[RMDB]
RNA sequence: GGGAACGACUCGAGUAGAGUCGAAAAAGAUAUGGAAGCUAUGGAGCAUAGUAGGUAGCGUUUGACGACAAGUCGGAAACGACUUGUCCGAGCUACCACCAAUGCGUUGAAAUAGCUUCCUAAGUCACCUUUAGCAUAGCUUCGGCUAUGCUAAAGGAAAAGAAACAACAACAACAAC
Reactivity to DMS in 0.01 (KOAc 150mM, MgCl2 10mM, bicine 150mM(pH8.5), 24C), signal-to-noise 3, nucleotides 027 to 126: a080g020a000u000a300u010g000g000a000a000g000c000u000a030u010g000g000a110g020c000a020u000a110g000u010a110g030g030u000a010g000c010g030u010u010u020g000a250c300g000a020c000a020a000g020u020c000g010g010a100a090a170c010g020a010c000u000u000g000u000c000c030g000a080g010c000u000a000c000c000a020c070c070a000a020u010g020c010g030u000u050g020a080a120a020u000a020g000c000u000u000c000c010u000a010a080g010u010c050a180
Reactivity to 2A3 in 0.01 (KOAc 150mM, MgCl2 10mM, bicine 150mM(pH8.5), 24C), signal-to-noise 2, nucleotides 027 to 126: a020g040a050u090a030u130g000g000a010a010g000c000u010a010u000g000g010a030g010c020a030u010a030g080u040a280g030g000u010a000g000c020g060u070u300u300g090a050c000g010a010c000a030a000g000u000c000g030g000a100a090a030c020g010a010c000u020u000g000u000c000c000g010a020g020c000u020a000c000c000a010c000c010a120a030u030g000c050g180u280u070g000a010a010a010u010a000g000c000u000u000c000c000u040a060a000g040u030c040a090